Source information:
Conditions: 150 mM KOAc, 10 mM MgCl2 and 150 mM bicine (pH 8.5), 24 C. Chemical mapping of a 177-nucleotide RNA with 2A3 and DMS. The 2A3 profile rests on 1,277 reads. 2A3 adducts were read by reverse transcription with SuperScript II with manganese. The DMS profile rests on 799 reads.
RNA sequence: GGGAACGACUCGAGUAGAGUCGAAAACAUCCGUUGCAGGGGCUCGCGUCAACACACUUGGCCUGCAGGCCAUGGUGCGAGCAGCUUCCACAGCCUGGCAAGACCUUUGACCGCACAGCCUCCGCGUUGUAUGAGCACUCUUCGGAGUGCUCAUACAAAAAGAAACAACAACAACAAC
Reactivity to 2A3 in 0.01 (KOAc 150mM, MgCl2 10mM, bicine 150mM(pH8.5), 24C), signal-to-noise 2, nucleotides 027 to 126: c020a070u040c010c020g060u030u200g020c020a010g000g010g030g010c010u050c060g020c010g030u020c040a040a010c020a020c020a020c200u050u080g040g050c000c040u100g090c090a080g000g000c010c000a060u080g010g010u020g010c000g050a000g000c010a020g020c030u230u080c000c000a050c000a020g020c000c000u040g070g010c030a060a090g010a130c000c000u030u000u010g040a060c010c090g000c000a010c010a080g030c000c010u040c000c000g000c010g010u010
Reactivity to DMS in 0.01 (KOAc 150mM, MgCl2 10mM, bicine 150mM(pH8.5), 24C), signal-to-noise 1, nucleotides 027 to 126: c150a090u080c000c040g010u040u030g000c030a100g000g050g000g050c030u000c100g000c020g000u010c030a110a030c300a030c150a090c030u010u000g000g000c100c000u040g000c090a010g000g000c000c110a300u030g000g000u000g000c060g010a130g000c010a100g000c000u000u010c000c130a000c170a280g030c000c080u070g100g010c180a060a010g000a080c000c100u000u000u000g000a030c000c000g020c080a030c280a060g000c000c000u000c000c000g000c180g000u100